Annotation
Conditions: 150 mM KOAc, 10 mM MgCl2 and 150 mM bicine (pH 8.5), 24 C. Structure probing data (DMS and 2A3) for a 177-nucleotide construct.
RNA sequence: GGGAACGACUCGAGUAGAGUCGAAAAGACUUAUCCAGAGAAGUGAAGGGAUUUGGCCCAAUGAAACUUCAGCAACAGACUUAAAAGACAAAAGUACUGUGCUAACUCCAAAGAGGUAUGCCUCAAAAGUAGGAAGGGAAUUCGUUCCCUUCCUACUAAAAGAAACAACAACAACAAC
Reactivity to DMS in 0.01 (KOAc 150mM, MgCl2 10mM, bicine 150mM(pH8.5), 24C), signal-to-noise 4, nucleotides 027 to 126: g000a090c110u020u010a060u020c030c030a190g010a090g020a030a010g000u000g000a030a030g000g000g000a160u010u000u000g010g020c010c020c010a160a120u030g020a280a150a050c030u000u010c020a070g000c010a010a000c000a010g020a080c000u000u000a050a070a140a150g020a120c270a050a080a020a010g010u000a010c010u000g000u000g000c010u010a040a090c140u020c020c020a020a050a060g000a070g000g010u020a070u030g000c010c010u000c040a060a050a080
Reactivity to 2A3 in 0.01 (KOAc 150mM, MgCl2 10mM, bicine 150mM(pH8.5), 24C), signal-to-noise 5, nucleotides 027 to 126: g050a000c040u130u120a080u160c040c020a030g050a000g010a160a010g020u020g030a130a090g020g000g040a100u030u010u020g060g000c000c000c000a010a180u060g010a010a030a010c020u020u030c020a020g020c000a020a070c000a010g030a000c010u050u090a060a130a080a040g170a090c090a080a180a020a000g030u040a270c020u010g000u010g010c000u010a020a030c020u000c030c000a000a070a000g030a010g000g080u140a040u260g170c000c000u020c000a050a050a000